[RMDB]
RNA sequence: GGGAACGACUCGAGUAGAGUCGAAAAUACAAGUACGAAAGUACAAGCCUUAUCAGUUGGGCCUUCUGGUCAAAUUAGCGCUCACCCAGGAGGUCGUUCGCAUGAGGUCGACAAGCGCUAAAAGAAAGAUGCGUUACACUUUCGAGUGUAACGCAUCAAAAGAAACAACAACAACAAC
Reactivity to DMS in 0.01 (KOAc 150mM, MgCl2 10mM, bicine 150mM(pH8.5), 24C), signal-to-noise 1, nucleotides 027 to 126: u010a110c090a180a160g030u010a010c000g000a110a000a170g020u000a010c000a090a180g000c000c010u000u000a030u000c070a110g040u040u010g000g030g040c020c000u000u000c000u000g020g000u000c050a040a050a130u000u000a020g000c020g060c000u000c080a150c300c000c030a010g000g000a030g000g010u000c000g000u000u000c100g000c160a030u000g000a040g000g010u000c110g040a070c110a050a010g000c020g050c000u000a020a020a110a030g000a020a200a070